[RMDB]
RNA sequence: GGGAACGACUCGAGUAGAGUCGAAAACAACUGUUAUCUUGCCACUGCAUUGUUAACACUCCAACAAAUAGAGUUGAAGUUUAAUCCACCUGCUCUACAAAGUGCUGGUGAAGCUGCUAACUUUUGUCCACUCCUCACUUCGGUGAGGAGAAAAGAAACAACAACAACAAC
Reactivity to DMS in 0.01 (KOAc 150mM, MgCl2 10mM, bicine 150mM(pH8.5), 24C), signal-to-noise 4, nucleotides 027 to 129: c060a040a050c130u040g000u050u000a050u000c050u000u000g040c070c080a120c070u000g040c060a030u060u000g050u060u010a000a070c050a060c090u060c040c010a070a020c040a090a180a140u090a070g050a010g020u000u000g040a030a050g000u040u030u050a120a050u060c030c030a040c030c010u000g050c030u020c020u070a010c200a050a100a060g030u050g010c000u050g040g020u030g000a080a080g040c000u020g050c090u020a010a050c030u000u000u000u000g030u020c030c030a110
Reactivity to 2A3 in 0.01 (KOAc 150mM, MgCl2 10mM, bicine 150mM(pH8.5), 24C), signal-to-noise 9, nucleotides 027 to 129: c000a000a000c000u010g000u040u010a080u080c040u030u170g010c010c030a080c070u080g010c030a040u070u040g050u070u090a090a050c040a020c070u030c020c020a010a010c030a050a200a130u220a070g120a010g040u000u030g040a070a010g020u020u050u150a040a040u070c040c000a020c010c010u030g010c000u010c000u090a140c090a060a180a030g020u030g010c030u020g020g020u020g010a020a020g030c030u040g000c000u010a000a040c000u030u030u020u040g040u000c000c010a030
The record gives the reactivity of an RNA of 170 nucleotides to DMS and 2A3. It was measured as part of the RMDB library 15KLIB. Values are in units of 0.01, from 0 to 300, in steps of 10. For DMS the reverse transcriptase was MarathonRT.